[RMDB]
RNA sequence: GGGAACGACUCGAGUAGAGUCGAAAACAACUCAAAUAUAUGGCUGGUGGUGUCAGCUCCAUGUACGACUCCAUCGAUGUGACGGAAGGUUCUGUAGCAGAAAUCCAGGCCGCAGUUACCGCAGCUGCAGAAGUACAUGAUUCGUCAUGUACUUCUGAAAAGAAACAACAACAACAAC
Reactivity to DMS in 0.01 (KOAc 150mM, MgCl2 10mM, bicine 150mM(pH8.5), 24C), signal-to-noise 9, nucleotides 027 to 126: c150a090a120c080u000c090a080a100a110u010a070u000a070u010g000g010c020u000g010g040u010g010g010u000g010u000c040a090g010c050u000c060c060a050u010g020u000a050c060g000a140c030u000c010c020a050u000c040g010a130u010g010u010g010a040c060g010g000a070a100g000g000u000u000c030u000g000u000a060g020c020a070g000a040a060a070u010c050c040a200g010g010c020c020g010c040a030g000u000u000a080c080c060g020c110a060g000c060u010g010
Reactivity to 2A3 in 0.01 (KOAc 150mM, MgCl2 10mM, bicine 150mM(pH8.5), 24C), signal-to-noise 9, nucleotides 027 to 126: c010a000a060c020u060c130a050a130a000u240a020u050a060u170g060g000c020u030g010g060u070g020g040u040g040u050c020a010g010c030u030c040c020a110u200g050u080a040c080g040a050c030u000c010c010a040u030c050g070a130u150g060u080g080a020c030g030g010a080a050g070g000u140u070c020u040g030u060a040g010c060a020g100a100a110a020u060c040c010a030g050g000c010c010g000c010a010g010u030u030a030c010c030g040c050a030g010c010u070g000